[RMDB]
RNA sequence: GGGAACGACUCGAGUAGAGUCGAAAAAAGUAUUGCUAUAGUUAAGGUUGCGCUUGCCUAUUAAGGCAUACUUCUCAGGAUGGCGCGUUGCAGUCCAACAAGAUCCAGGGACUGUACAGAAUUUUCCAAAACGCGUCGAGGUUCGCCUCGACGCGAAUCAAGAAAUCAAGUUCGCUUGAUUUCUUGAAAAAGAAACAACAACAACAAC
Reactivity to 2A3 in 0.01 (KOAc 150mM, MgCl2 10mM, bicine 150mM(pH8.5), 24C), signal-to-noise 4, nucleotides 027 to 156: a000a020g100u090a070u100u240g000c020u070a040u130a210g090u140u120a180a030g000g020u060u080g050c040g000c060u060u150g010c000c000u080a130u180u150a120a040g020g000c000a000u010a000c000u040u040c040u010c070a060g060g020a070u080g020g000c020g020c020g050u010u060g000c010a000g000u000c010c000a040a010c050a190a130g070a190u110c040c050a040g030g000g010a000c000u010g000u010a020c010a010g140a130a090u090u040u070u090c050c020a080a080a050a030c020g000c010g000u000c000g000a000g030g030u090u090c180g050c100c000u000c000g000a000c010g000c000g000a000a000
Reactivity to DMS in 0.01 (KOAc 150mM, MgCl2 10mM, bicine 150mM(pH8.5), 24C), signal-to-noise 3, nucleotides 027 to 156: a040a020g020u000a020u010u000g000c020u000a140u000a080g010u010u010a080a050g010g000u000u020g030c050g010c050u000u010g040c040c010u000a140u000u000a100a170g020g030c000a050u000a020c040u000u000c040u000c020a140g010g010a090u010g020g000c010g030c020g020u010u010g010c020a040g040u000c010c010a150a200c050a100a130g010a130u000c080c050a200g030g020g010a040c020u010g010u000a060c080a110g010a110a140u000u000u000u000c010c030a080a060a130a180c030g050c000g020u000c010g030a020g010g030u000u000c300g000c020c000u000c100g030a030c010g010c000g010a000a010